Overview
Conditions: 150 mM KOAc, 10 mM MgCl2 and 150 mM bicine (pH 8.5), 24 C. Chemical mapping of a 207-nucleotide RNA with 2A3 and DMS. It was measured as part of the RMDB library OK3TST.

RNA sequence: GGGAACGACUCGAGUAGAGUCGAAAAUUACAAUUGGCAAGAACUCAUCAAAAAAGGUGUGAAUGAAGUGUUGUUAACUAAUGAUGGCAAUUAUAUAUUUUGUUGGCUAAAGUCCUUGAGUCAGAUGGUUAAAAGUGGUUUAAGAGGAGAAAUAAAGAAUGCUUCUACUAUUCGUAGUAGAAGCAUUAAAAGAAACAACAACAACAAC
Reactivity to 2A3 in 0.01 (KOAc 150mM, MgCl2 10mM, bicine 150mM(pH8.5), 24C), signal-to-noise 2, nucleotides 027 to 156: u140u050a030c030a000a080u070u020g060g000c010a010a070g020a060a050c020u010c070a070u050c060a100a050a070a080a030a050g010g010u020g030u050g020a070a110u080g050a080a040g020u030g000u050u050g010u050u060a090a050c020u020a070a090u100g040a020u030g010g000c000a030a010u090u090a010u040a030u050a080u070u100u080u130g030u010u010g020g000c010u050a020a020a020g040u020c070c000u020u060g010a000g010u000c010a010g000a110u060g010g000u010u010a000a130a000a070g030u030g020g040u040u120u140a030a030g020a000g040g070a010g040a060a110a020u300a040a060a100g200
Reactivity to DMS in 0.01 (KOAc 150mM, MgCl2 10mM, bicine 150mM(pH8.5), 24C), signal-to-noise 3, nucleotides 027 to 156: u000u000a100c020a080a200u020u000g030g020c040a050a090g010a070a100c060u000c040a120u030c050a010a060a080a080a090a060g020g030u010g020u000g010a100a090u000g020a070a120g030u010g010u000u010g000u010u000a060a140c050u010a070a070u010g020a080u000g020g010c020a060a060u000u000a110u000a100u000a100u020u000u000u000g020u000u000g000g010c070u000a050a080a110g000u000c040c030u000u000g010a130g030u000c050a080g000a050u000g020g020u000u010a040a020a090a100g010u000g020g030u000u000u000a040a090g000a040g020g010a120g010a040a030a070u000a040a050a180g000